[RMDB]
RNA sequence: GGGAACGACUCGAGUAGAGUCGAAAAAAGUUAGAGAAGGAAGUUGAUACAAUCAGGAUACACAGCAGAGAGAUCACCUAUCUUGUCUACUUGCAGGUGGUGGUGUAAACUUCCAGGACCCCCCAAAAUCGCUAAGAGCAUUCGUGCUCUUAGCGAUAAAAGAAACAACAACAACAAC
Reactivity to DMS in 0.01 (KOAc 150mM, MgCl2 10mM, bicine 150mM(pH8.5), 24C), signal-to-noise 1, nucleotides 027 to 126: a080a040g020u010u020a010g040a140g010a140a060g020g000a000a080g030u000u000g020a090u000a020c010a100a110u000c040a070g040g020a230u000a080c080a050c030a010g010c000a000g010a110g000a050g000a010u010c190a070c290c150u000a170u010c030u000u000g020u000c030u000a030c000u000u000g010c090a050g000g050u010g000g050u000g000g000u000g020u000a040a010a020c000u000u000c010c000a120g000g000a250c010c000c020c000c000c040a040a040a110